[RMDB]
RNA sequence: GGGAACGACUCGAGUAGAGUCGAAAAAACAGAUCCUAGCUCAGUUGCUAUGGAAUCUGCAACUGAAAAAAUAAUUAUCCUUCCUGGUCAUUCUGCUGAUCUUACAUCUGUGACAUUUCAAAUUCAAAUCCACCCUAAAUUUCGAUUUAGGGUGGAUAAAAGAAACAACAACAACAAC
Reactivity to 2A3 in 0.01 (KOAc 150mM, MgCl2 10mM, bicine 150mM(pH8.5), 24C), signal-to-noise 2, nucleotides 027 to 126: a000a000c020a020g070a010u020c020c020u040a010g020c010u000c010a080g010u140u020g030c020u080a040u260g070g100a090a150u040c050u060g020c020a020a010c040u040g090a120a070a000a040a000a000u190a030a070u120u150a070u080c020c000u040u030c010c010u020g000g010u040c020a030u110u000c020u090g040c020u000g030a040u050c000u030u120a030c020a040u040c020u060g040u050g060a030c040a090u030u150u090c100a140a020a110u040u050c010a130a080
Reactivity to DMS in 0.01 (KOAc 150mM, MgCl2 10mM, bicine 150mM(pH8.5), 24C), signal-to-noise 2, nucleotides 027 to 126: a030a080c050a040g030a080u000c030c010u000a060g010c080u010c100a070g010u010u010g020c010u000a060u000g010g020a110a080u010c100u000g000c040a040a060c040u000g000a000a020a090a100a100a100u010a050a050u010u000a070u010c010c050u000u000c010c000u000g020g000u000c060a050u010u000c100u000g000c080u000g000a040u000c030u000u000a050c150a040u010c060u010g020u000g010a090c090a090u000u000u010c040a030a030a100u000u000c140a060a120